[RMDB]
An RNA of 177 nucleotides, treated with DMS and 2A3 and read out base by base. 2A3 adducts were read by reverse transcription with SuperScript II with manganese.
RNA sequence: GGGAACGACUCGAGUAGAGUCGAAAAAGCUUCGGGCUAGCGCGAGCGACGACUCCGCCGUCGAGCAGGAUGUCACCGUGGAUCAACCGUGGAACGCCAACAUCCACUACGACGCUCUGCUGGAUGCAGCUCGGGGUAGUUUCGACUACCCCGAGCUAAAAGAAACAACAACAACAAC
Reactivity to DMS in 0.01 (KOAc 150mM, MgCl2 10mM, bicine 150mM(pH8.5), 24C), signal-to-noise 1, nucleotides 027 to 126: a120g010c050u000u000c030g000g000g000c000u000a110g300c000g000c080g040a040g000c000g010a290c150g000a070c080u000c180c010g070c000c010g100u000c000g000a040g000c000a030g000g000a000u000g070u000c000a180c300c220g000u000g000g000a010u000c120a120a300c300c120g040u010g000g000a140a110c040g000c060c050a080a170c250a080u000c000c000a000c020u000a210c300g000a010c000g000c000u000c030u030g010c080u000g000g070a000u030g000c210
Reactivity to 2A3 in 0.01 (KOAc 150mM, MgCl2 10mM, bicine 150mM(pH8.5), 24C), signal-to-noise 2, nucleotides 027 to 126: a010g000c020u080u020c060g050g080g020c050u060a050g050c020g010c100g020a000g070c050g160a120c160g130a180c040u030c000c040g000c000c000g010u050c040g030a000g000c000a000g030g080a040u010g010u030c000a000c070c040g000u010g000g010a010u030c070a010a120c000c090g020u040g010g140a110a160c120g010c040c000a000a000c020a010u000c000c000a000c000u090a010c100g010a000c000g060c000u060c010u030g000c000u080g110g000a030u100g000c040
Conditions: 150 mM KOAc, 10 mM MgCl2 and 150 mM bicine (pH 8.5), 24 C. For 2A3, 800 sequencing reads were counted.